[RMDB]
RNA sequence: GGGAACGACUCGAGUAGAGUCGAAAAAGGCACAGUCAGACGGAAACCCAUCGACUGUCACCAGAUGCUGCAUCACCUGAUCACUGAUGGCUCAACGGUAUCCGGCGGUACAACUGAAUACUUGUAGAACGAAGAAUCGAUUCGUCGAUUCUUCGUUAAAAGAAACAACAACAACAAC
Reactivity to DMS in 0.01 (KOAc 150mM, MgCl2 10mM, bicine 150mM(pH8.5), 24C), signal-to-noise 4, nucleotides 027 to 126: a040g010g000c220a030c020a020g010u010c030a160g000a080c030g000g010a090a090a100c130c020c020a130u020c060g000a040c080u010g010u000c050a130c030c000a080g000a090u020g000c040u000g000c060a030u010c050a070c040c020u010g000a130u010c080a070c100u000g020a070u020g020g000c030u010c070a080a100c070g000g010u000a040u000c040c030g000g000c070g020g020u020a010c090a040a090c090u000g000a070a020u030a080c090u000u000g020u040a080g000
Reactivity to 2A3 in 0.01 (KOAc 150mM, MgCl2 10mM, bicine 150mM(pH8.5), 24C), signal-to-noise 7, nucleotides 027 to 126: a000g070g000c040a010c010a010g020u020c010a040g030a050c020g060g000a090a080a070c000c010c010a020u040c020g030a030c010u010g000u010c020a030c020c000a030g030a080u080g010c030u030g000c010a020u030c000a030c010c010u030g040a050u050c030a010c100u060g030a040u070g090g000c020u040c060a100a080c060g020g010u030a020u020c020c000g010g000c020g070g000u060a050c030a070a040c080u070g040a090a060u090a150c030u040u110g050u100a050g040